RNA sequence: GGGAACGACUCGAGUAGAGUCGAAAAACGAGGUACGCCUCGAAAAUAUGACCGGUGUCAUAGCCUCUAGCACACAGAGGUCGCGUGGCUUCAACUCCCCCCCUUUUCCGAGGGUAUCGGAAACCAAAAAACACAAUUUGGUUCGCCAAAUUGUGAACGUUGACCAUAGGUUCGCCUAUGGUCAACGAAAAGAAACAACAACAACAAC
Reactivity to 2A3 in 0.01 (KOAc 150mM, MgCl2 10mM, bicine 150mM(pH8.5), 24C), signal-to-noise 1, nucleotides 027 to 156: a020c040g000a010g030g000u030a020c050g020c010c020u100c010g020a050a030a020a030u060a030u020g060a030c080c140g230g030u210g020u120c000a000u010a020g000c000c000u000c040u020a070g030c060a040c040a010c040a170g020a040g010g000u010c000g030c030g050u010g000g000c000u070u090c050a060a100c100u030c000c000c000c000c000c000c000u030u090u000u000c000c000g000a010g000g000g020u080a020u000c000g010g010a000a000a000c000c020a120a000a070a000a000a050c020a000c000a000a000u000u000u030g000g000u020u090c150g000c070c000a010a000a020u010u000g000u000g000a000a000